Source: RMDB library 15KREP, as collected in RNAgym. Structure probing data (DMS and 2A3) for a 177-nucleotide construct. Reactivities are given for positions 27 through 126. 2A3 adducts were read by reverse transcription with SuperScript II with manganese. For DMS the reverse transcriptase was MarathonRT.
RNA sequence: GGGAACGACUCGAGUAGAGUCGAAAACUGUGCAGUAUGCUCAUAAACAUGACAUACAAAUUACUAAUGAGAGCUACAAUAAUUAUGUACCCUCAUAUGUUAAACCUGAUAGUGUGUCUACCAGCGAGCUAAGUAUAGUGUUCGCACUAUACUUAGCAAAAGAAACAACAACAACAAC
Reactivity to DMS in 0.01 (KOAc 150mM, MgCl2 10mM, bicine 150mM(pH8.5), 24C), signal-to-noise 5, nucleotides 027 to 126: c060u000g000u010g020c170a130g020u000a010u000g010c210u000c000a020u000a080a100a130c200a200u000g000a040c020a020u000a020c020a090a070a130u000u000a050c020u010a200a080u010g000a020g000a030g010c300u000a010c010a030a070u010a150a090u010u010a080u000g000u000a030c020c020c010u000c000a010u010a090u010g010u000u000a050a090a110c130c050u000g000a030u000a040g010u000g010u000g010u000c010u000a080c030c010a060g010c130g010a130
Reactivity to 2A3 in 0.01 (KOAc 150mM, MgCl2 10mM, bicine 150mM(pH8.5), 24C), signal-to-noise 7, nucleotides 027 to 126: c020u030g030u100g050c020a040g030u090a030u080g020c020u010c020a050u120a090a260a050c080a060u060g010a000c000a000u040a020c010a010a070a040u120u050a020c010u070a030a050u020g010a010g010a010g010c040u010a000c010a010a090u190a160a080u200u180a080u120g000u010a010c000c010c000u010c000a010u030a030u070g030u030u080a040a080a050c010c030u040g040a060u030a070g030u080g020u030g010u050c000u020a040c020c000a020g050c040g100a010